[RMDB]
RNA sequence: GGGAACGACUCGAGUAGAGUCGAAAAAGCGGCUACGGCCGCAAUGGCAAAUGAUGAGUAGAAUCUUAUCCUACACACAGAUGUAUCAGUGUUGACUACCAAUCUCUGCUUAUUAUCUGAUGCCAAACACUAUAGAACCUUUCGAGGUUCUAUAGUGAAAAGAAACAACAACAACAAC
Reactivity to DMS in 0.01 (KOAc 150mM, MgCl2 10mM, bicine 150mM(pH8.5), 24C), signal-to-noise 7, nucleotides 027 to 126: a080g010c010g020g020c000u000a070c170g040g020c000c000g040c010a010a020u010g000g020c010a050a100a090u010g010a020u010g000a020g020u010a040g000a070a070u030c080u020u030a060u010c050c070u010a060c060a090c080a090c060a080g000a060u010g010u020a060u010c050a070g020u000g010u010u000g010a190c140u030a080c170c080a070a100u020c080u000c000u000g000c070u000u000a030u010u020a020u010c040u000g000a160u010g010c000c010a040a080a210
Reactivity to 2A3 in 0.01 (KOAc 150mM, MgCl2 10mM, bicine 150mM(pH8.5), 24C), signal-to-noise 9, nucleotides 027 to 126: a000g010c000g010g000c010u030a050c250g120g000c000c010g000c000a000a090u040g000g000c010a010a020a090u090g020a010u020g010a020g020u050a030g080a060a020u040c040u070u070a050u080c050c040u120a030c040a000c000a000c020a040g060a130u100g090u150a100u130c040a040g010u010g030u090u080g060a080c050u090a100c110c040a070a070u040c020u010c010u070g020c020u040u030a020u060u050a020u060c030u050g040a040u060g010c000c000a010a030a010

This 177-nucleotide RNA was probed chemically with DMS and 2A3. The data come from the RNA Mapping Database (RMDB), libraries RFM100 and RFMREP. Values cover nucleotides 27 to 126. Conditions: 150 mM KOAc, 10 mM MgCl2 and 150 mM bicine (pH 8.5), 24 C. 2A3 is a SHAPE reagent: it acylates the 2'-hydroxyl of flexible nucleotides of all four kinds.